Overview:
An RNA of 177 nucleotides, treated with 2A3 and DMS and read out base by base. The 2A3 profile rests on 57,802 reads. Values cover nucleotides 27 to 126. Conditions: 150 mM KOAc, 10 mM MgCl2 and 150 mM bicine (pH 8.5), 24 C. For DMS, 92,043 sequencing reads were counted.
RNA sequence: GGGAACGACUCGAGUAGAGUCGAAAAAGUGUUCCAACUAGGUGGGCCUGGCGUAUCGGAGAUGAAUGGGCGUCCUGGCAGAGGAGCACAGGUAAUCCUGUCCGCAGUGCAGGGUCUACUCUGUGAGGGCGCGGUCGUCCUUCGGGAUGGUUGCGCCAAAAGAAACAACAACAACAAC
Reactivity to 2A3 in 0.01 (KOAc 150mM, MgCl2 10mM, bicine 150mM(pH8.5), 24C), signal-to-noise 9, nucleotides 027 to 126: a000g120u080g020u020u010c010c000a020a010c040u050a020g040g000u030g030g030g010c010c020u020g040g000c030g010u040a100u100c030g040g010a080g020a070u110g060a070a080u050g030g010g000c010g060u040c000c000u000g040g000c020a020g020a040g040g020a030g020c010a000c000a020g000g010u020a010a020u020c000c000u010g040u030c020c070g070c110a060g020u040g100c000a010g000g000g000u000c020u020a030c020u020c010u030g020u010g040a060g030
Reactivity to DMS in 0.01 (KOAc 150mM, MgCl2 10mM, bicine 150mM(pH8.5), 24C), signal-to-noise 9, nucleotides 027 to 126: a070g010u020g010u000u010c010c010a120a130c070u010a050g000g020u010g000g010g010c020c010u000g010g010c080g010u020a080u010c080g010g000a100g010a080u020g010a090a080u020g000g000g000c040g000u010c010c010u000g000g010c100a090g010a120g000g010a060g000c030a020c020a010g000g000u010a050a030u000c000c010u000g000u010c040c070g010c160a100g000u020g010c010a030g000g010g010u010c070u000a020c000u020c020u000g000u010g000a110g010